Record summary
The record gives the reactivity of an RNA of 207 nucleotides to 2A3 and DMS.

RNA sequence: GGGAACGACUCGAGUAGAGUCGAAAAAUCUAGCGAAUCGCCGUAGUGCAGCGUGUUCGUCCGCGUCGCUGCGGUUAAAUCAAAAGACUGGACUAAACAUGUAGAACUAGUCGUGGAGCGCUUCUGGACGCGGGUUCGAUUCCCGCCGCCUCCACCACAUAAAUGUCACGUUCGCGUGACAUUUAUGAAAAGAAACAACAACAACAAC
Reactivity to 2A3 in 0.01 (KOAc 150mM, MgCl2 10mM, bicine 150mM(pH8.5), 24C), signal-to-noise 2, nucleotides 027 to 156: a000u080c080u050a040g060c020g060a070a030u070c060g010c000c000g020u020a000g020u010g050c070a030g000c030g000u060g050u060u100c140g050u060c050c000g000c000g060u050c010g000c000u000g000c000g000g000u010u020a030a040a020u130c030a010a000a060a020g030a010c050u060g030g000a000c030u090a090a150a030c070a110u200g040u220a050g040a150a080c050u020a040g070u090c050g010u000g000g000a010g000c120g000c050u180u110c120u170g070g010a070c080g000c000g010g020g000u040u060c040g010a020u050u070c000c000c000g000c000c000g000c000c010u000c000c000a010c020c020a020
Reactivity to DMS in 0.01 (KOAc 150mM, MgCl2 10mM, bicine 150mM(pH8.5), 24C), signal-to-noise 2, nucleotides 027 to 156: a050u000c040u000a040g020c010g010a090a080u000c080g050c000c000g020u010a050g050u000g010c120a130g020c010g040u010g000u000u000c130g020u000c050c020g020c020g030u000c030g020c040u000g050c000g000g000u000u000a030a050a110u010c090a110a110a090a130g010a070c030u000g020g010a160c020u000a160a080a090c090a120u020g010u000a070g000a060a070c070u000a040g020u010c040g010u000g000g000a060g000c130g000c090u000u030c070u000g010g000a070c120g010c010g010g000g020u000u000c130g010a300u020u000c000c000c030g000c000c060g010c020c000u000c000c010a080c040c040a130

The data come from the RNA Mapping Database (RMDB), library RSTRND. DMS adducts were read by reverse transcription with MarathonRT. For 2A3 the reverse transcriptase was SuperScript II with manganese. Conditions: 150 mM KOAc, 10 mM MgCl2 and 150 mM bicine (pH 8.5), 24 C. The DMS profile rests on 3,233 reads.